[RMDB]
RNA sequence: GGGAACGACUCGAGUAGAGUCGAAAACUAACGACUCCGCGAGGAGGGCGAGUACACUGUGGAGACCGCUGGCGCUAAGUCAGAGGAAGGAUUGGUCGACGGUAGGUCAGUAUGCCCCGAAUAUCCCGAAUCGUUAAAUCUUCGGAUUUAACGAUUCAAAAGAAACAACAACAACAAC
Reactivity to DMS in 0.01 (KOAc 150mM, MgCl2 10mM, bicine 150mM(pH8.5), 24C), signal-to-noise 3, nucleotides 027 to 126: c070u000a050a060c050g010a150c010u000c010c010g000c300g000a220g000g000a040g010g000g020c000g000a050g020u000a090c090a050c080u010g020u000g020g000a170g010a090c020c030g010c020u010g000g010c010g010c140u010a060a120g000u000c040a050g000a090g010g020a130a060g000g000a080u000u000g010g000u010c020g010a100c040g020g020u010a040g020g010u010c040a090g010u010a070u000g000c020c010c020c040g010a080a080u020a110u010c030c050c060
Reactivity to 2A3 in 0.01 (KOAc 150mM, MgCl2 10mM, bicine 150mM(pH8.5), 24C), signal-to-noise 3, nucleotides 027 to 126: c010u030a030a000c020g010a020c010u030c020c000g010c070g030a060g000g000a010g000g030g020c000g000a010g030u050a020c060a000c030u040g050u110g160g050a090g040a050c000c020g000c030u000g020g000c010g020c140u200a130a060g040u070c020a020g030a070g110g050a040a040g080g000a060u060u080g070g030u100c020g010a010c020g010g100u150a100g060g010u040c010a010g020u060a100u160g000c010c010c020c000g050a090a050u080a070u090c040c010c010